This 177-nucleotide RNA was probed chemically with DMS and 2A3. Reactivities are given for positions 27 through 126. DMS adducts were read by reverse transcription with MarathonRT. The RNA was probed in 150 mM KOAc, 10 mM MgCl2 and 150 mM bicine (pH 8.5) at 24 C. The data come from the RNA Mapping Database (RMDB), library OK2TST.
RNA sequence: GGGAACGACUCGAGUAGAGUCGAAAAUUAUAAUACCUACCCGAAAACCGCUAAAGCUUUAUUGAUCUUGUGAAUUGGCUUCUACAAUCAGAAGUUGCCUUUAAGGUUUUCAGAGUAAGGCGCAUUCCCCUGUCUAACGAUUCGUCGUUAGACAGGGAAAAGAAACAACAACAACAAC
Reactivity to DMS in 0.01 (KOAc 150mM, MgCl2 10mM, bicine 150mM(pH8.5), 24C), signal-to-noise 1, nucleotides 027 to 126: u010u000a110u030a130a090u000a200c000c010u000a060c000c010c020g010a040a040a000a010c000c020g000c180u000a010a020a020g010c040u020u000u000a050u000u000g010a090u020c040u010u000g010u010g010a040a090u010u010g010g060c240u000u000c030u010a150c070a090a030u000c060a030g000a010a060g000u000u000g010c160c030u000u000u000a080a060g000g000u000u000u000u000c000a080g000a100g000u000a010a020g020g010c080g010c190a090u000u000c050
Reactivity to 2A3 in 0.01 (KOAc 150mM, MgCl2 10mM, bicine 150mM(pH8.5), 24C), signal-to-noise 1, nucleotides 027 to 126: u040u020a090u040a130a050u040a020c000c000u020a010c000c000c000g000a020a050a000a000c020c000g000c130u050a070a040a020g000c010u090u180u090a140u130u190g070a050u070c020u120u140g010u090g100a120a070u110u180g190g080c030u000u020c060u060a060c060a070a090u140c010a000g020a090a000g080u060u040g070c010c000u050u070u000a020a040g060g000u040u000u000u000c000a010g030a020g020u020a140a080g020g030c020g040c060a020u030u090c000

For 2A3 the reverse transcriptase was SuperScript II with manganese.